Structure probing data (DMS) for a 177-nucleotide construct. The data come from the RNA Mapping Database (RMDB), library OK2TST. For DMS, 983 sequencing reads were counted.
RNA sequence: GGGAACGACUCGAGUAGAGUCGAAAAAUCUCUACGGCAUUACGAAUGGCGCUGUGUGGGCGCUUCAACUCACGGCUAACGCGGGUAAUUUUACAGAGACUCACCCCUAAAUCGGUAGCGAUUUGCCAACUCAGGGGGUAUUCGUACCCCCUGAGUUAAAAGAAACAACAACAACAAC
Reactivity to DMS in 0.01 (KOAc 150mM, MgCl2 10mM, bicine 150mM(pH8.5), 24C), signal-to-noise 1, nucleotides 027 to 126: a110u000c010u000c020u000a140c120g010g020c040a040u010u000a050c060g000a100a140u000g000g000c090g010c050u010g050u040g010u030g020g010g000c080g000c070u040u000c090a100a030c000u000c020a050c060g000g010c080u020a040a100c080g000c040g020g000g000u000a030a050u000u000u000u020a080c110a060g020a120g020a050c040u000c080a190c050c000c000c110u000a050a010a040u000c050g000g010u010a080g010c060g010a030u020u000u000g000c100c080

Conditions: 150 mM KOAc, 10 mM MgCl2 and 150 mM bicine (pH 8.5), 24 C.